[RMDB]
Annotation: Chemical mapping of a 207-nucleotide RNA with 2A3 and DMS.
RNA sequence: GGGAACGACUCGAGUAGAGUCGAAAACUUGACGGAUGUCCCGUACGGCAAGUGAAAAUUCAGGGAAUAAGGUUGCGGUGGGUGGCUUCGGUCUUGCCGCAGCACGAAAAUGAAGGCGAAGAUAAGCAUGUAGAAAGCAAAUUAGUUCCUCGUUUGGCCAAUAGCAAGUGUUCGCACUUGCUAUUGGAAAAGAAACAACAACAACAAC
Reactivity to 2A3 in 0.01 (KOAc 150mM, MgCl2 10mM, bicine 150mM(pH8.5), 24C), signal-to-noise 3, nucleotides 027 to 156: c000u010u020g030a010c000g030g070a060u060g040u050c020c010c000g000u040a030c010g010g000c020a030a010g020u070g210a140a040a050a040u190u100c060a030g020g000g040a010a030u070a080a020g030g000u020u010g010c010g000g010u040g040g090g050u050g060g000c000u030u040c090g020g020u010c010u020u050g010c010c000g000c000a000g010c010a000c040g030a000a030a000a030u130g020a020a000g040g000c010g010a020a030g020a080u060a050a040g040c000a010u080g000u040a030g040a130a070a000g020c020a030a030a130u090u040a090g020u020u040c020c000u040c060g040u010u050u080g070g000
Reactivity to DMS in 0.01 (KOAc 150mM, MgCl2 10mM, bicine 150mM(pH8.5), 24C), signal-to-noise 1, nucleotides 027 to 156: c000u000u000g010a020c000g000g000a110u010g010u000c000c020c020g040u000a070c000g050g000c010a010a020g030u010g000a130a080a080a160u010u000c080a100g000g000g020a050a070u010a130a080g030g000u010u000g000c010g000g040u000g040g020g010u000g000g000c020u010u000c140g030g030u000c020u000u000g010c010c020g040c020a030g000c010a090c080g010a100a070a150a100u000g020a060a020g000g020c000g000a080a050g020a100u010a040a090g010c030a010u000g020u010a070g000a060a070a110g040c010a030a050a100u000u000a190g000u000u000c040c030u000c090g040u020u000u000g020g020